[RMDB]
RNA sequence: GGGAACGACUCGAGUAGAGUCGAAAAACCGUCGACUAUCGCACACAAUAUAGGAAAGGCAAGAACGACCGUUCAGGAACGUCUUCCCGUGCUUGUCGAGUACGGACUCAUCGAAAAGGUCGACGACCUUGCGUACUCGGUUCGCCGAGUACGCAAGAAAAGAAACAACAACAACAAC
Reactivity to DMS in 0.01 (KOAc 150mM, MgCl2 10mM, bicine 150mM(pH8.5), 24C), signal-to-noise 2, nucleotides 027 to 126: a070c170c030g020u000c030g020a030c000u000a090u000c040g050c170a040c060a120c100a050a030u020a060u010a140g020g040a040a060a090g000g000c010a080a000g010a040a020c050g000a100c180c040g000u000u030c080a150g020g010a080a060c130g000u010c080u000u000c100c030c040g050u000g020c040u000u010g020u030c030g010a060g010u000a040c040g000g010a130c100u020c050a090u010c050g000a020a040a150a100g000g000u000c000g000a070c000g000a130c110
Reactivity to 2A3 in 0.01 (KOAc 150mM, MgCl2 10mM, bicine 150mM(pH8.5), 24C), signal-to-noise 2, nucleotides 027 to 126: a010c050c000g000u010c000g000a000c000u050a050u180c020g060c030a010c000a010c050a240a100u160a070u120a300g100g000a040a040a040g020g000c010a000a030g020a060a020c000g060a080c010c070g040u080u120c150a100g090g090a110a030c020g020u000c040u100u060c040c020c000g000u010g010c000u040u030g050u040c010g000a000g020u020a010c000g000g060a050c030u040c130a130u120c070g040a020a080a060a030g080g040u000c000g010a030c040g020a040c030